[RMDB]
RNA sequence: GGGAACGACUCGAGUAGAGUCGAAAAGAUAUGGAGGUGUUGGUGGAGCUGCUCGGAAACGAGCAGCUAUGAAGCCACACCUCCUAAGUCGAAAACAGUAAGUGAACCUUCGGGUUCACUUACUGAAGAUUAAACCAACCUUCGGGUUGGUUUAAUCAAAAGAAACAACAACAACAAC
Reactivity to DMS in 0.01 (KOAc 150mM, MgCl2 10mM, bicine 150mM(pH8.5), 24C), signal-to-noise 1, nucleotides 027 to 126: g010a000u000a300u000g000g000a010g020g010u000g000u000u000g000g000u000g000g030a030g010c000u000g020c000u000c000g030g000a060a080a130c000g020a010g010c000a000g000c000u000a010u010g000a120a300g000c000c000a020c020a020c010c000u000c000c000u000a000a020g000u000c010g020a110a050a130a190c000a020g000u000a000a010g000u000g000a000a000c000c000u000u000c180g000g020g030u000u000c000a000c000u000u000a000c000u000g000a030a040